[RMDB]
RNA sequence: GGGAACGACUCGAGUAGAGUCGAAAAGCGGCCAGGGUGCGCUUCGUGAGGUCCAAAAUCACCUCCCAGUAGUACGUCAGAUCUCGUCGCUGCAGGUCCUCCAGCGAGGCGGGGUUGCUGGUCAGGGAUUCACCUAGAUGUUCGCAUCUAGGUGAAUAAAAGAAACAACAACAACAAC
Reactivity to DMS in 0.01 (KOAc 150mM, MgCl2 10mM, bicine 150mM(pH8.5), 24C), signal-to-noise 6, nucleotides 027 to 126: g000c080g000g020c010c010a080g030g010g010u010g010c040g010c020u010u010c070g020u010g010a050g000g000u010c080c090a050a070a100a120u030c170a060c020c020u000c040c030c040a080g020u000a060g010u020a050c030g010u030c090a120g010a070u030c040u000c030g020u010c030g020c020u010g010c070a080g000g000u000c020c020u000c030c060a080g010c020g000a060g000g010c040g010g000g030g010u010u000g000c040u000g000g010u000c050a130g000g010g000
Reactivity to 2A3 in 0.01 (KOAc 150mM, MgCl2 10mM, bicine 150mM(pH8.5), 24C), signal-to-noise 8, nucleotides 027 to 126: g060c030g020g010c010c010a040g060g020g030u090g040c020g000c010u040u050c040g100u090g040a020g000g030u050c050c020a070a030a010a130u160c050a050c000c010u050c000c000c010a030g030u110a020g010u050a050c030g040u020c110a030g010a140u030c030u020c030g040u020c010g010c030u030g000c010a040g000g040u030c010c000u010c010c010a020g010c010g050a060g020g040c020g010g010g010g010u030u040g020c020u010g010g020u040c060a070g060g030g030
Structure probing data (DMS and 2A3) for a 177-nucleotide construct. Conditions: 150 mM KOAc, 10 mM MgCl2 and 150 mM bicine (pH 8.5), 24 C. The 2A3 profile rests on 14,153 reads.